Structure probing data (2A3) for a 207-nucleotide construct. Source: RMDB library RNAMAK, as collected in RNAgym. For 2A3 the reverse transcriptase was SuperScript II with manganese. For 2A3, 592 sequencing reads were counted.
RNA sequence: GGGAACGACUCGAGUAGAGUCGAAAAAGUGGCUUCGGCCACUGCAUAGCGUACUACCUGGUGCUGCGAGGAUCAGGACGAACUACUCAUGUCCCAAAUAGGACAUGAGCGUCCUGGGAGCAGCUCAGGUAUCGCAUUCGCGUCCUUUCGAGGACAAGCAUACCCACUCUUUCGAGAGUGGGUAUGCAAAAGAAACAACAACAACAAC
Reactivity to 2A3 in 0.01 (KOAc 150mM, MgCl2 10mM, bicine 150mM(pH8.5), 24C), signal-to-noise 1, nucleotides 027 to 156: a000g000u010g030g010c050u100u200c220g130g000c010c000a000c010u010g010c000a160u200a090g000c010g010u020a040c040u000a000c090c000u010g000g050u300g000c010u000g030c000g010a300g020g020a000u040c000a000g020g100a000c000g050a060a020c050u300a020c000u300c000a000u000g020u040c040c000c010a160a240a090u230a120g000g000a000c000a000u000g000a010g000c000g000u010c010c000u000g000g000g000a000g000c000a000g000c020u000c000a000g000g020u010a000u020c000g000c000a000u100u170c130g010c060g010u000c000c000u040u140u220c300g060a080g030g000a010c010a000a020